[RMDB]
RNA sequence: GGGAACGACUCGAGUAGAGUCGAAAAUGCCAAAUGAAUGCUUACAUCUUCUGUGAUUGUUCUAAUGAGCAGUGUCCCUCCUGGGCUUCAAAGAAAUGUGCAUAAAGCUUGGACUCACACCUAUUGAUCCAUCUAUCGUGUUCGCACGAUAGAUGGAAAAAGAAACAACAACAACAAC
Reactivity to 2A3 in 0.01 (KOAc 150mM, MgCl2 10mM, bicine 150mM(pH8.5), 24C), signal-to-noise 1, nucleotides 027 to 126: u080g020c050c020a000a000a100u150g020a020a030u010g010c030u080u090a020c010a010u040c070u180u000c050u050g060u080g110a130u050u030g050u060u030c020u080a170a100u220g020a000g020c050a020g060u030g070u130c020c020c000u020c020c010u040g020g010g040c000u070u020c060a030a030a030g040a000a060a000u070g010u020g030c000a020u030a050a120a010g030c000u040u030g020g000a070c000u020c050a070c020a040c030c000u050a060u090u130g090a030
Reactivity to DMS in 0.01 (KOAc 150mM, MgCl2 10mM, bicine 150mM(pH8.5), 24C), signal-to-noise 2, nucleotides 027 to 126: u010g010c020c020a050a110a050u000g000a220a050u010g010c090u000u030a070c050a040u000c140u000u000c070u000g020u010g000a080u010u000g040u000u000c020u010a080a150u000g030a070g020c040a060g020u000g020u010c020c040c000u020c100c080u000g000g030g050c030u000u010c050a030a050a040g000a050a040a050u000g010u010g020c040a060u010a080a100a100g000c110u000u000g000g000a080c060u000c060a090c140a120c060c050u030a060u000u000g000a170
Chemical mapping of a 177-nucleotide RNA with 2A3 and DMS. Conditions: 150 mM KOAc, 10 mM MgCl2 and 150 mM bicine (pH 8.5), 24 C. Source: RMDB library OK2TRN, as collected in RNAgym. For DMS, 1,296 sequencing reads were counted.